Annotation:
Chemical mapping of a 177-nucleotide RNA with DMS and 2A3.
RNA sequence: GGGAACGACUCGAGUAGAGUCGAAAAACGCGAGGAUUCGUCCUCGCGUACAUAAGUGAGUUCCCCGGAUAGCUGCCUAAGUGAGUUCGCCGGAUAGCUGCCAAGCACAUAGUUUCGACUAUGUGAAUCAUACCGUAGGGUUCGCCCUACGGUAUGAAAAAGAAACAACAACAACAAC
Reactivity to DMS in 0.01 (KOAc 150mM, MgCl2 10mM, bicine 150mM(pH8.5), 24C), signal-to-noise 4, nucleotides 027 to 126: a010c020g010c000g000a010g000g020a020u000u010c180g010u000c000c000u000c000g010c000g010u000a000c140a060u000a060a110g010u010g000a170g010u000u000c000c000c010c170g010g010a060u000a040g010c040u000g010c030c010u010a080a140g020u000g000a120g020u000u000c060g020c050c070g010g010a070u000a030g010c030u010g000c020c050a140a120g010c010a000c000a000u000a010g000u000u000u000c160g010a030c000u000a010u010g010u000g000a050a110
Reactivity to 2A3 in 0.01 (KOAc 150mM, MgCl2 10mM, bicine 150mM(pH8.5), 24C), signal-to-noise 3, nucleotides 027 to 126: a000c000g000c000g000a010g000g020a040u040u040c180g090u000c090c010u000c000g000c000g000u010a000c000a020u140a040a060g140u050g200a090g030u020u010c010c000c010c000g020g010a090u060a090g020c020u060g000c030c010u100a140a060g020u040g130a100g070u140u200c050g020c020c000g000g040a130u090a030g000c000u010g010c000c000a030a010g100c000a000c000a010u000a000g000u000u050u070c170g030a010c000u000a000u000g000u000g010a000a060

2A3 is a SHAPE reagent: it acylates the 2'-hydroxyl of flexible nucleotides of all four kinds.